An RNA of 177 nucleotides, treated with 2A3 and DMS and read out base by base. Reactivities are given for positions 27 through 126. The reactions ran in a buffer of 150 mM KOAc, 10 mM MgCl2 and 150 mM bicine (pH 8.5), at 24 C. The data come from the RNA Mapping Database (RMDB), library TTRDEL.
RNA sequence: GGGAACGACUCGAGUAGAGUCGAAAAGAUAUGGACACCCAGGGAGUUCCAUUUCGGAAACGAAAUGAGAACAUCGAUCUGGUUGUCCUAAGUCAAACUUGCCCACACGUUCGCGUGUGGGCAAGAACAUAGUACGUACGUUCGCGUACGUACUAUGAAAAGAAACAACAACAACAAC
Reactivity to 2A3 in 0.01 (KOAc 150mM, MgCl2 10mM, bicine 150mM(pH8.5), 24C), signal-to-noise 4, nucleotides 027 to 126: g000a000u000a000u030g000g000a000c010a000c000c010c000a000g000g000g000a020g000u000u000c010c000a000u000u010u020c000g000g010a000a000a000c010g030a010a010a000u150g010a170g010a060a000c010a010u300c010g000a000u000c000u000g010g020u010u010g000u010c000c000u000a000a000g000u000c020a020a060a060c000u000u000g020c010c040c000a000c000a000c010g100u130u130c300g020c020g150u000g000u000g000g020g000c000a000a000g000a000a000
Reactivity to DMS in 0.01 (KOAc 150mM, MgCl2 10mM, bicine 150mM(pH8.5), 24C), signal-to-noise 3, nucleotides 027 to 126: g000a010u000a000u020g000g000a020c000a010c100c000c000a010g010g010g020a010g020u000u000c000c000a010u000u000u010c000g020g000a000a010a020c010g010a000a010a000u000g000a070g010a010a010c000a280u000c210g000a010u010c000u000g000g000u000u000g000u000c000c000u000a000a040g000u000c000a120a090a200c000u000u000g010c000c000c010a000c000a010c000g010u000u010c190g020c000g030u000g020u000g000g000g010c000a000a000g000a070a190